[RMDB]
RNA sequence: GGGAACGACUCGAGUAGAGUCGAAAAGGUGAAGACGAUCUAUCGCGUCUUUGGUUUCAACAGCAAACAUGUGCCUCUGGCCGAGGGCGGUAACGAUAUCUUGAAGCAGUACCGGAUCUGCGAGUCGCGCGACGAAAACACCAUUCAGCGUCUGCAAGCUCCAGUUCAUAUUCGUAUGAACUGGAGCAAAAGAAACAACAACAACAAC
Reactivity to 2A3 in 0.01 (KOAc 150mM, MgCl2 10mM, bicine 150mM(pH8.5), 24C), signal-to-noise 3, nucleotides 027 to 156: g090g020u090g030a020a000g020a020c030g020a080u040c060u090a070u070c080g020c030g020u030c000u050u020u030g040g000u040u120u040c140a130a110c020a040g040c030a040a120a060c070a140u160g080u120g160c000c000u000c010u060g030g000c020c000g020a070g030g000g020c000g000g040u090a050a010c050g020a040u030a050u130c070u060u160g070a120a000g000c010a000g010u050a060c050c000g030g040a060u050c010u030g020c000g030a030g050u040c010g010c000g000c020g070a050c020g050a060a050a020a030c080a030c010c010a010u070u090c050a020g010c010g040u010c030u000g030c040a070a030
Reactivity to DMS in 0.01 (KOAc 150mM, MgCl2 10mM, bicine 150mM(pH8.5), 24C), signal-to-noise 2, nucleotides 027 to 156: g000g020u000g010a030a020g000a070c020g000a070u000c100u000a100u000c140g030c020g010u000c020u010u000u000g060g010u000u000u000c040a040a100c080a080g060c050a100a100a090c110a080u000g040u010g000c020c020u000c120u000g010g000c000c020g030a110g020g020g040c010g050g000u000a020a100c030g030a080u000a030u000c010u000u010g020a100a130g030c040a090g020u000a120c040c020g010g000a120u000c000u000g000c060g000a120g060u000c030g030c050g000c030g000a160c010g010a040a070a050a090c050a090c030c000a140u000u000c050a090g000c020g030u000c000u000g000c040a050a300